[RMDB]
RNA sequence: GGGAACGACUCGAGUAGAGUCGAAAAGAUAUGGAGAGGCACACUGACUUGUGUGAUCGGAAACGAUCACCAAGCGUGAUGUGUGCUACCCACCUCCUAAGUCAAAAGCGUCUGUUCGCAGACGCAACAAAGACAACGUCUUCGGACGUUGUCUUUGAAAAGAAACAACAACAACAAC
Reactivity to DMS in 0.01 (KOAc 150mM, MgCl2 10mM, bicine 150mM(pH8.5), 24C), signal-to-noise 3, nucleotides 027 to 126: g010a080u000a110u020g010g000a020g010a240g020g010c000a020c000a010c000u000g000a080c000u000u000g000u000g020u010g000a000u020c010g000g000a030a100a090c000g000a010u000c000a010c000c000a000a000g020c300g010u020g000a070u010g000u000g010u000g000c010u000a010c080c080c030a300c170c000u000c000c000u000a060a150g000u010c040a080a090a140a100g000c010g000u000c000u000g010u000u010c250g020c010a020g010a010c000g000c000a050a030
Reactivity to 2A3 in 0.01 (KOAc 150mM, MgCl2 10mM, bicine 150mM(pH8.5), 24C), signal-to-noise 3, nucleotides 027 to 126: g030a030u100a020u140g010g040a000g020a110g010g050c010a000c010a000c000u050g170a140c020u060u000g050u060g010u000g260a000u010c000g020g000a020a070a000c000g000a000u000c000a010c000c000a020a000g020c040g240u130g060a100u050g000u000g030u000g000c000u010a020c050c000c010a120c010c020u010c000c000u060a090a030g110u070c080a010a090a020a160g000c010g000u000c000u020g070u070u190c300g010c140a020g010a000c000g000c000a000a000

Structure probing data (DMS and 2A3) for a 177-nucleotide construct. Values are in units of 0.01, from 0 to 300, in steps of 10. For 2A3, 4,598 sequencing reads were counted.